[RMDB]
RNA sequence: GGGAACGACUCGAGUAGAGUCGAAAACUCAAUGUAGGGAAUAACAUUGAAUUGAUACAAAUACCUUUUUCGGUGUAGGGAAAAACACCGAACUGAUACAAAUACCUUUCUCAAUGUAGGGAAUAACAAAACAGGCAUCGCUUCGGCGAUGCCUGAACUAGUAAAUACUGUUCGCAGUAUUUACUAGAAAAGAAACAACAACAACAAC
Reactivity to DMS in 0.01 (KOAc 150mM, MgCl2 10mM, bicine 150mM(pH8.5), 24C), signal-to-noise 1, nucleotides 027 to 156: c030u000c020a060a090u000g000u000a070g030g020g000a110a140u000a110a060c000a010u000u000g000a010a010u000u010g020a080u000a080c030a010a190a090u010a010c010c010u020u000u000u000u000c000g020g050u000g030u010a090g000g010g030a080a080a080a060a040c000a010c000c000g000a010a010c040u010g010a050u020a010c050a040a200a080u020a030c010c000u000u010u000c060u010c010a010a050u020g010u000a060g010g010g000a050a070u000a070a130c060a060a030a060a170c010a030g020g020c000a010u000c000g010c010u020u000c270g070g030c030g040a010u000g010c030c020u000g000a000a020
Reactivity to 2A3 in 0.01 (KOAc 150mM, MgCl2 10mM, bicine 150mM(pH8.5), 24C), signal-to-noise 6, nucleotides 027 to 156: c010u010c020a010a030u060g030u050a080g050g090g080a090a140u100a140a020c010a010u010u010g030a070a070u100u150g060a100u130a200c060a020a160a040u150a090c010c010u010u000u010u000u010c010g000g010u000g000u000a010g010g010g060a060a210a070a010a020c000a000c000c010g000a000a000c010u020g010a000u040a130c030a020a100a030u120a080c000c020u020u110u050c030u020c090a080a120u160g060u090a050g000g000g070a030a050u090a140a040c050a040a060a010a020c010a010g000g000c000a000u000c010g030c010u070u100c210g050g000c020g000a000u010g000c000c000u000g000a000a000
The record gives the reactivity of an RNA of 207 nucleotides to DMS and 2A3.
In probing experiments dimethyl sulfate is read out at A N1 and C N3, which are open when not base-paired.
DMS adducts were read by reverse transcription with MarathonRT.
2A3 adducts were read by reverse transcription with SuperScript II with manganese.